An RNA of 177 nucleotides, treated with DMS and 2A3 and read out base by base. Source: RMDB library OK1LIB, as collected in RNAgym. The DMS profile rests on 47,122 reads. The RNA was probed in 150 mM KOAc, 10 mM MgCl2 and 150 mM bicine (pH 8.5) at 24 C. The 2A3 profile rests on 11,129 reads.

RNA sequence: GGGAACGACUCGAGUAGAGUCGAAAAUUGUCCUUUUUUAACGCUGGAAAACAGAUUGACUGGGUCCAAUUAGUUCGUCUUUUGAUCUGGGGGUGAAUUUGACUUUUGUAACGGCGCAUUACAAGGGCGAUAAGUUUAGUUUCGACUAAAUUUAUCGAAAAGAAACAACAACAACAAC
Reactivity to DMS in 0.01 (KOAc 150mM, MgCl2 10mM, bicine 150mM(pH8.5), 24C), signal-to-noise 9, nucleotides 027 to 126: u020u030g010u010c010c000u000u010u010u020u020u010a050a110c090g010c030u000g010g010a080a050a080a090c090a040g010a090u010u010g000a060c030u000g000g010g020u000c050c060a050a070u020u020a050g010u010u000c060g010u010c020u000u000u010u010g010a050u000c020u000g010g000g000g000g010u010g010a060a070u020u010u010g000a100c040u000u010u000u010g010u010a040a060c040g000g000c010g020c060a100u000u010a040c070a020a030g000g000g010
Reactivity to 2A3 in 0.01 (KOAc 150mM, MgCl2 10mM, bicine 150mM(pH8.5), 24C), signal-to-noise 4, nucleotides 027 to 126: u070u090g050u030c000c000u020u030u000u000u020u140a080a020c040g000c020u020g040g040a020a040a010a000c010a010g010a020u040u040g030a030c000u010g000g000g020u000c010c010a020a010u030u010a030g030u010u030c030g020u010c000u000u050u020u050g030a030u000c020u020g000g000g000g020g010u040g040a020a040u040u030u070g030a030c000u020u010u020u020g020u010a040a010c040g090g000c010g010c000a000u000u010a020c010a020a020g020g000g000